[RMDB]
The record gives the reactivity of an RNA of 177 nucleotides to DMS and 2A3.
RNA sequence: GGGAACGACUCGAGUAGAGUCGAAAAGAUAUGGAUCGAUACAUCUUUUGACGGGUAGCAAUCGGAAACGAUUGUAGUACCCGAUAAGAUGAUCGAUCCUAAGUCAAAACUGGCCUUCGGGCCAGAAGUAAUCUGCAUACUUCGGUAUGCAGAUUACAAAAGAAACAACAACAACAAC
Reactivity to DMS in 0.01 (KOAc 150mM, MgCl2 10mM, bicine 150mM(pH8.5), 24C), signal-to-noise 2, nucleotides 027 to 126: g000a040u000a300u010g010g000a030u010c010g010a000u000a110c010a010u010c000u010u010u000u030g010a180c160g010g010g010u000a060g000c010a000a000u000c000g000g010a110a080a080c000g010a010u000u000g010u000a150g010u000a010c010c000c000g030a080u010a000a000g010a020u020g010a040u000c010g010a000u000c000c000u010a030a130g010u000c030a100a050a160a220c010u000g010g000c000c010u010u020c250g050g000g030c010c010a000g000a020a110
Reactivity to 2A3 in 0.01 (KOAc 150mM, MgCl2 10mM, bicine 150mM(pH8.5), 24C), signal-to-noise 2, nucleotides 027 to 126: g010a000u030a030u090g000g020a000u000c010g030a000u100a290c020a000u000c080u020u290u160u200g300a240c300g020g000g000u000a010g010c000a010a010u030c010g000g010a030a020a040c000g010a010u020u000g010u020a100g090u000a000c000c000c000g010a010u030a040a000g000a010u010g020a010u000c000g000a000u000c000c010u010a020a000g000u010c030a000a000a130a170c010u010g000g040c050c000u050u080c300g160g040g000c130c000a000g000a000a010
Reactivities are given for positions 27 through 126.